[RMDB]
RNA sequence: GGGAACGACUCGAGUAGAGUCGAAAACUGACGUCCAGACCCUCCCCCGUCCGGGAGAAUGGAGAUUCGGGAACGUGAAGCAUGGUGGGGACGAAGCCCCCUCCGGGCGCUCCCCUCGGAUCUCCGCAUGGCGCUUACUUCGGUAAGCGCAAAAGAAACAACAACAACAAC
Reactivity to DMS in 0.01 (KOAc 150mM, MgCl2 10mM, bicine 150mM(pH8.5), 24C), signal-to-noise 5, nucleotides 027 to 129: c000u000g020a200c260g020u040c040c010a080g020a190c100c040c010u000c010c020c020c000c120g070u000c090c150g000g080g000a080g060a100a080u000g000g000a000g010a010u020u010c010g020g000g050a050a080c020g060u000g030a040a300g050c000a030u050g020g010u020g050g000g080g130a020c010g030a070a150g040c030c000c000c000c000u020c040c000g000g060g030c030g020c040u030c000c050c040c020u020c030g040g000a010u010c010u020c000c020g000c180a110u040g030
Reactivity to 2A3 in 0.01 (KOAc 150mM, MgCl2 10mM, bicine 150mM(pH8.5), 24C), signal-to-noise 6, nucleotides 027 to 129: c020u050g090a050c050g060u050c040c010a020g020a120c000c000c010u020c000c000c000c010c030g110u080c040c030g030g030g020a090g060a050a080u230g000g000a000g000a010u010u000c020g000g000g040a110a100c070g070u160g120a060a010g020c000a020u040g000g020u010g020g010g000g000a010c120g110a070a050g060c000c000c000c000c000u010c010c000g030g040g010c030g000c050u020c000c000c000c000u000c000g000g000a000u000c000u000c000c000g000c020a050u100g090